[RMDB]
RNA sequence: GGGAACGACUCGAGUAGAGUCGAAAAAGAUUCAGCAGUGAAGGAAGAACCACCCCAGAAGAGGCUACCUAUGUUAGCUGAAGAAUUUGAGUGCUCUGGAUCGGAAGACCCAAUCAUUCGGGAGCUGCCUUUCCGGCACAUUCGUGUGCCGGAAAGGAAAAGAAACAACAACAACAAC
Reactivity to 2A3 in 0.01 (KOAc 150mM, MgCl2 10mM, bicine 150mM(pH8.5), 24C), signal-to-noise 1, nucleotides 027 to 126: a000g100a020u040u030c000a000g000c000a000g050u000g220a110a010g070g010a040a300g000a010a000c000c000a040c030c000c000c000a010g000a080a030g050a290g030g000c000u000a000c110c070u040a060u190g020u050u090a070g000c000u010g000a090a000g100a070a040u120u160u230g030a130g000u080g020c000u000c000u090g030g000a080u030c000g000g060a000a000g070a070c000c040c040a000a050u170c040a060u000u090c000g120g000g000a000g030c000u000g010